[RMDB]
RNA sequence: GGGAACGACUCGAGUAGAGUCGAAAACAAGGCCGAGGAACAUCAUCGUGCUGGAUGCCGUUGUCGCCAUGCCCGCACCAUGCAGCCCCAUCGGCGCAAAGCCGAAAUGGCCGAAGAUCAGCGUCCACGGACGUUUUAUAUUCGUAUAAAACGUCCGAAAAGAAACAACAACAACAAC
Reactivity to 2A3 in 0.01 (KOAc 150mM, MgCl2 10mM, bicine 150mM(pH8.5), 24C), signal-to-noise 3, nucleotides 027 to 126: c020a030a070g070g000c010c020g070a050g030g000a090a060c030a150u130c010a020u030c030g060u050g030c030u040g040g010a030u040g000c030c040g110u100u170g210u180c030g000c030c010a080u170g110c030c000c010g000c010a010c000c000a010u070g000c030a030g040c020c000c010c000a040u010c000g000g000c000g020c080a140a100a010g000c000c010g000a080a040a060u080g010g000c000c020g010a040a000g020a050u070c030a010g070c010g050u050c010c100a040
Reactivity to DMS in 0.01 (KOAc 150mM, MgCl2 10mM, bicine 150mM(pH8.5), 24C), signal-to-noise 5, nucleotides 027 to 126: c080a120a170g010g000c000c010g010a080g020g010a080a090c120a100u010c040a040u000c170g030u010g020c030u010g010g010a050u000g000c060c030g010u000u000g010u010c060g010c110c040a040u010g010c030c030c040g000c040a070c050c060a040u010g000c110a130g000c040c010c010c060a190u000c020g010g000c010g030c140a070a060a160g010c000c010g000a010a080a080u010g000g020c000c030g000a120a060g010a070u000c060a100g020c060g010u000c030c040a200
An RNA of 177 nucleotides, treated with 2A3 and DMS and read out base by base. The reactions ran in a buffer of 150 mM KOAc, 10 mM MgCl2 and 150 mM bicine (pH 8.5), at 24 C. Values cover nucleotides 27 to 126.